Source information:
Structure probing data (2A3) for a 207-nucleotide construct. Values cover nucleotides 27 to 156.

RNA sequence: GGGAACGACUCGAGUAGAGUCGAAAAGCAAAUAUUGUCUUAAUUACUUAGGCUAAAAGAAAUAAGUAUUAAAGCGGGACAAGGCAUCGACAUUUGAUACAACUAUUGAUCAAUGGAUGUCUUAUUUAAACCUCAUCCGGCUUCGGCCGGAUGAGAACCUAGUGUCAAGCUUCGGCUUGACACUAGGAAAAGAAACAACAACAACAAC
Reactivity to 2A3 in 0.01 (KOAc 150mM, MgCl2 10mM, bicine 150mM(pH8.5), 24C), signal-to-noise 1, nucleotides 027 to 156: g010c000a080a090a120u190a060u110u170g020u000c000u000u190a200a190u050u040a060c010u080u050a050g040g070c080u190a260a050a000a010g060a040a110a010u030a000a090g010u000a010u070u030a080a290a040g010c060g030g070g000a000c020a030a060g000g000c000a000u000c030g080a190c020a040u070u100u250g000a000u220a250c000a060a110c110u280a220u300u190g060a000u000c000a000a000u000g000g000a000u000g000u000c000u000u000a060u000u120u080a080a130a000c000c000u000c020a000u000c000c000g020g020c060u000u090c150g090g000c000c000g000g000a000u000g000a000g000a000a000
For 2A3, 554 sequencing reads were counted.